[RMDB]
RNA sequence: GGGAACGACUCGAGUAGAGUCGAAAAGAAAACCACGAGGAGGAGGCGCAGUGUUCUCUCCUGAGCGUGAAGCCGGCUCUUGGUGUCGCUUUGCUGCGACUGCCUUUUGCCAUUGAUGAUCGUUCUUCUAUCAGAGCACCUUCGGGUGCUCUGAUAGAAAAGAAACAACAACAACAAC
Reactivity to 2A3 in 0.01 (KOAc 150mM, MgCl2 10mM, bicine 150mM(pH8.5), 24C), signal-to-noise 1, nucleotides 027 to 126: g160a000a000a000a030c020c140a000c070g020a040g030g040a010g070g010a070g020g000c130g110c120a040g070u020g040u300u010c010u000c000u000c040c010u030g050a070g000c000g000u000g010a110a000g080c010c000g000g030c000u000c000u000u020g030g030u090g000u010c060g070c030u220u080u200g130c230u070g000c000g000a000c040u060g100c000c020u000u050u170u000g000c050c000a000u000u100g000a130u100g070a010u030c050g000u000u000c000u010u000
An RNA of 177 nucleotides, treated with 2A3 and read out base by base.
It was measured as part of the RMDB library RFM100.
Conditions: 150 mM KOAc, 10 mM MgCl2 and 150 mM bicine (pH 8.5), 24 C.